[RMDB]
RNA sequence: GGGAACGACUCGAGUAGAGUCGAAAAUCAAAGAAUUUAACCUAUGUGGGAUCCCGUGGGAACAGAUUUAGUUCUGAAUACCGGUUAUCUUGGUUAAGAUAUGGUCUUAUAUAUGCUGGAAAUAUAAUCGUAGUAUUUACUUCGGUAAAUACUACGAAAAAGAAACAACAACAACAAC
Reactivity to 2A3 in 0.01 (KOAc 150mM, MgCl2 10mM, bicine 150mM(pH8.5), 24C), signal-to-noise 1, nucleotides 027 to 126: u070c050a140a110a020g100a140a060u060u040u060a000a020c000c010u090a070u130g100u070g000g040g080a040u050c030c100c000g010u070g000g010g000a060a010c020a010g080a020u160u200u170a200g250u070u010c000u010g000a080a040u030a090c070c000g000g020u070u050a050u060c060u010u170g150g010u120u140a110a000g010a010u040a030u140g050g060u030c000u100u080a120u000a030u000a000u150g000c010u030g070g070a030a070a000u300a000u300a140a000
Reactivity to DMS in 0.01 (KOAc 150mM, MgCl2 10mM, bicine 150mM(pH8.5), 24C), signal-to-noise 4, nucleotides 027 to 126: u010c050a140a110a200g010a170a050u000u010u000a090a140c020c020u010a060u010g020u000g010g020g000a090u000c200c100c050g020u010g010g010g020a100a200c010a010g000a040u010u000u020a130g000u010u000c000u010g010a090a100u010a130c030c010g010g000u000u010a020u000c010u000u000g010g020u000u010a030a030g010a030u000a020u010g010g000u000c020u010u000a040u010a040u000a030u000g010c040u010g000g000a050a100a080u000a060u010a070a110